[RMDB]
RNA sequence: GGGAACGACUCGAGUAGAGUCGAAAAGGGCAUUGAAACGGCUGUUGGCCAUUAUGUUCAUGCUCGCCUGAAGGGUGGUCUUAUUUUAAAGUUUGACUCUGGCACCGUUAGCAAGACUUCAGACUGGUAGCGCGUGGGUUCGCCCACGCGAAAAGAAACAACAACAACAAC
Reactivity to 2A3 in 0.01 (KOAc 150mM, MgCl2 10mM, bicine 150mM(pH8.5), 24C), signal-to-noise 3, nucleotides 027 to 129: g000g000g000c000a000u090u180g050a090a070a000c080g000g010c020u060g150u300u200g170g000c000c000a000u120u140a080u300g000u040u000c000a030u010g010c010u020c060g000c000c000u000g030a000a000g050g000g000u180g000g000u100c030u080u130a240u020u130u000u190a060a030a010g030u010u000u010g000a010c010u000c020u020g010g000c010a110c040c080g040u040u030a100g000c040a050a000g020a050c000u030u020c040a040g010a070c030u100g070g020u030a000g060
Reactivity to DMS in 0.01 (KOAc 150mM, MgCl2 10mM, bicine 150mM(pH8.5), 24C), signal-to-noise 5, nucleotides 027 to 129: g000g000g000c010a020u030u140g020a050a020a100c120g060g050c030u010g050u000u000g010g060c040c000a250u040u010a000u030g030u000u000c010a050u020g010c040u010c060g050c060c010u040g040a120a040g000g010g130u010g000g020u000c040u000u000a090u030u040u020u010a070a170a120g020u010u070u000g010a130c300u000c060u010g010g030c070a070c160c030g010u000u030a060g020c070a120a150g000a130c120u000u000c040a080g010a060c080u000g060g010u000a100g020
Description
The record gives the reactivity of an RNA of 170 nucleotides to 2A3 and DMS. DMS adducts were read by reverse transcription with MarathonRT. For 2A3 the reverse transcriptase was SuperScript II with manganese. For 2A3, 2,618 sequencing reads were counted. The RNA was probed in 150 mM KOAc, 10 mM MgCl2 and 150 mM bicine (pH 8.5) at 24 C.